The record gives the reactivity of an RNA of 177 nucleotides to 2A3.
For 2A3 the reverse transcriptase was SuperScript II with manganese.
The 2A3 profile rests on 673 reads.
The reactions ran in a buffer of 150 mM KOAc, 10 mM MgCl2 and 150 mM bicine (pH 8.5), at 24 C.
RNA sequence: GGGAACGACUCGAGUAGAGUCGAAAAGUCACGUGGUACGCCACGUGACAACCGGAAACGGAGAUGACGAUCGGGCGCAUCUUGCGAAAGCGUAAACGCCAAAGCGAGGAGUUACGACUCCUCGCAAGCCGGACGGUAUAUUCGUAUACCGUCCGGCAAAAGAAACAACAACAACAAC
Reactivity to 2A3 in 0.01 (KOAc 150mM, MgCl2 10mM, bicine 150mM(pH8.5), 24C), signal-to-noise 1, nucleotides 027 to 126: g000u010c000a000c000g030u040g000g060u170a120c300g030c090c000a000c000g000u000g000a000c050a050a000c050c040g030g140a000a180a000c070g000g000a010g010a110u050g000a050c010g020a050u080c130g020g000g000c020g000c040a050u010c000u020u020g080c050g050a050a000a000g010c010g030u050a150a020a050c090g070c000c000a190a000a000g000c000g000a020g000g000a000g000u030u120a080c200g020a000c060u000c000c040u000c000g000c000a000a000